RNA sequence: GGGAACGACUCGAGUAGAGUCGAAAACGACAUGGCUUCGGCCAUGUCGAAAGGACGAGUGAGACCGAAACGGAGGUAGGUGCAACUACCUUCUCACUCAAAAAAUCCGUUUGUUCGCAAACGGAAAGUGUUCAAAUGUCUUCGGACAUUUGAACACAAAAGAAACAACAACAACAAC
Reactivity to DMS in 0.01 (KOAc 150mM, MgCl2 10mM, bicine 150mM(pH8.5), 24C), signal-to-noise 1, nucleotides 027 to 126: c040g000a000c000a010u000g000g000c000u000u000c260g000g000c020c000a000u000g010u000c000g030a010a070a130g000g020a130c130g000a040g000u000g000a030g040a220c200c020g000a010a210a090c070g010g000a010g000g000u000a000g000g020u000g050c300a140a100c000u000a000c000c000u000u000c000u000c000a000c000u000c000a000a010a090a110a100a100u000c000c000g010u020u000u000g030u000u020c300g000c000a000a020a000c000g000g000a030a010a050